An RNA of 177 nucleotides, treated with DMS and 2A3 and read out base by base. DMS adducts were read by reverse transcription with MarathonRT. The RNA was probed in 150 mM KOAc, 10 mM MgCl2 and 150 mM bicine (pH 8.5) at 24 C. 2A3 is a SHAPE reagent: it acylates the 2'-hydroxyl of flexible nucleotides of all four kinds. For DMS, 2,641 sequencing reads were counted.
RNA sequence: GGGAACGACUCGAGUAGAGUCGAAAAGGGGCGGCGCUGGCCGGCACCGUCAUCGCCGUUUUGGUUCCGCUGGUAACCAAGCGUGUCAUAGACGACGCGAUCGCGGCCGACCACAGACCGCUGGCGCCCAAUUAGGUCCGUUCGCGGACCUAAUUGGAAAAGAAACAACAACAACAAC
Reactivity to DMS in 0.01 (KOAc 150mM, MgCl2 10mM, bicine 150mM(pH8.5), 24C), signal-to-noise 2, nucleotides 027 to 126: g010g030g000g000c050g020g020c090g000c090u000g000g000c030c020g000g000c020a080c290c060g030u070c220a030u000c100g000c000c020g040u000u000u000u000g000g000u000u020c300c040g000c120u030g000g030u040a050a080c050c010a060a010g000c020g040u010g000u000c060a110u030a160g030a090c070g000a180c140g000c030g030a020u000c190g020c120g000g020c000c030g000a080c010c040a110c180a180g000a300c020c010g000c040u000g020g000c100g010c030
Reactivity to 2A3 in 0.01 (KOAc 150mM, MgCl2 10mM, bicine 150mM(pH8.5), 24C), signal-to-noise 4, nucleotides 027 to 126: g050g000g000g010c010g000g000c030g000c110u020g010g000c010c030g010g010c090a050c050c000g050u050c000a000u000c010g000c020c020g000u040u030u050u050g030g010u060u060c100c040g090c110u110g020g060u140a090a060c060c020a090a000g000c010g000u080g010u040c010a030u130a080g070a020c070g040a070c090g000c000g020a010u040c050g000c020g010g030c010c000g000a020c000c000a020c020a040g100a150c010c010g000c010u000g050g040c020g080c000